The record gives the reactivity of an RNA of 177 nucleotides to 2A3 and DMS. The reactions ran in a buffer of 150 mM KOAc, 10 mM MgCl2 and 150 mM bicine (pH 8.5), at 24 C. Reactivities are given for positions 27 through 126. DMS adducts were read by reverse transcription with MarathonRT. The 2A3 profile rests on 2,470 reads.
RNA sequence: GGGAACGACUCGAGUAGAGUCGAAAAAUCGGCCCGUUCGCGGGCCGAUACAGGCGGAGGCUCGCACCUACCGACCGGCGCAAGGACGCACGGUACUGCGAAUUGACUGUGGAUUCGUCCACAGUAAGCUACAGUGAACUUUCGAGUUCACUGUAGCAAAAGAAACAACAACAACAAC
Reactivity to 2A3 in 0.01 (KOAc 150mM, MgCl2 10mM, bicine 150mM(pH8.5), 24C), signal-to-noise 2, nucleotides 027 to 126: a000u000c000g030g000c030c060c000g040u030u050c210g020c000g080g050g000c000c010g000a020u010a010c000a000g030g000c020g030g020a040g060g000c040u020c060g000c010a030c000c020u050a090c010c010g120a120c040c010g070g000c010g000c020a200a300g180g040a150c020g000c040a080c040g010g000u060a090c070u060g030c010g080a060a080u100u160g090a050c010u010g000u000g020g000a010u060u020c160g050u000c060c000a010c000a000g000u000a030a060
Reactivity to DMS in 0.01 (KOAc 150mM, MgCl2 10mM, bicine 150mM(pH8.5), 24C), signal-to-noise 2, nucleotides 027 to 126: a020u000c030g020g000c010c000c000g000u010u000c130g030c050g050g010g030c000c010g000a000u000a020c110a080g060g000c060g000g010a080g020g000c070u000c060g020c050a060c060c080u010a070c030c010g000a070c090c030g000g040c000g040c000a130a100g010g010a150c040g010c030a090c100g010g000u000a030c160u000g000c010g000a070a070u030u000g000a030c000u020g010u010g000g010a030u000u020c140g000u000c000c000a030c010a020g000u000a030a050